[RMDB]
RNA sequence: GGGAACGACUCGAGUAGAGUCGAAAAGAGUCUCGCUCUGUUGCCCAGGCUGGAGUGCAAUGGCACGAUCUUGGCUCACUGCAACCUCCGCCUCCCGGGUUCGAGCUAUUUUCAUGUCUCAGCCUCCAGUAGUGUCUAUCUUCGGAUAGACACUACUAAAAGAAACAACAACAACAAC
Reactivity to 2A3 in 0.01 (KOAc 150mM, MgCl2 10mM, bicine 150mM(pH8.5), 24C), signal-to-noise 2, nucleotides 027 to 126: g050a010g050u030c040u050c170g020c020u050c020u030g140u120u130g060c010c010c030a010g060g000c050u080g010g020a030g010u220g040c000a000a080u090g030g000c010a020c140g080a130u080c080u050u120g050g000c020u030c070a040c030u070g010c020a050a090c010c010u020c000c040g000c020c010u030c050c040c010g000g020g040u020u070c050g000a010g020c010u000a070u010u050u020u030c030a030u060g010u000c010u020c030a040g000c000c020u040c020c010
Reactivity to DMS in 0.01 (KOAc 150mM, MgCl2 10mM, bicine 150mM(pH8.5), 24C), signal-to-noise 3, nucleotides 027 to 126: g000a060g010u000c120u010c150g010c040u000c010u000g010u000u000g000c030c010c020a140g000g030c080u000g010g000a050g020u010g010c040a060a070u000g000g000c020a040c070g000a040u000c070u000u000g000g010c020u000c010a140c150u000g000c100a040a030c080c020u000c060c080g020c040c010u000c020c030c040g000g000g000u000u000c100g010a000g000c010u000a020u000u000u000u010c030a060u000g000u000c010u000c100a210g000c010c010u000c020c040